[RMDB]
RNA sequence: GGGAACGACUCGAGUAGAGUCGAAAAACGAAGAUUCGUCUUCGUAAAAAAGAUAUGGAUCGAUGCGUGGGACAUGAUAUAGGCUCGGAAACGAGCCGAAUAUCAACAGCCCACGCCGCUCGAUCCUAAGUCAAAAAGGCUUACUUCGGUAAGCCAACCCCCUCAUGAGAUUCGUCUCAUGAGGGGGAAAAGAAACAACAACAACAAC
Reactivity to 2A3 in 0.01 (KOAc 150mM, MgCl2 10mM, bicine 150mM(pH8.5), 24C), signal-to-noise 1, nucleotides 027 to 156: a000c010g000a020a000g000a020u050u170c180g020u000c090u060u000c000g030u080a100a060a010a030a000a010g070a030u090a060u180g020g000a000u010c010g000a010u170g010c000g000u000g000g000g020a060c100a280u030g000a010u030a000u000a010g000g000c000u080c070g020g000a060a100a090c010g080a000g000c090c000g000a040a000u000a000u000c000a000a120c010a000g010c000c010c000a000c000g000c000c000g000c000u000c000g000a000u000c000c000u000a020a010g060u040c020a070a000a000a140a000g000g000c000u000u000a000c000u000u110c300g080g000u020a000a010g000c120c000a000a050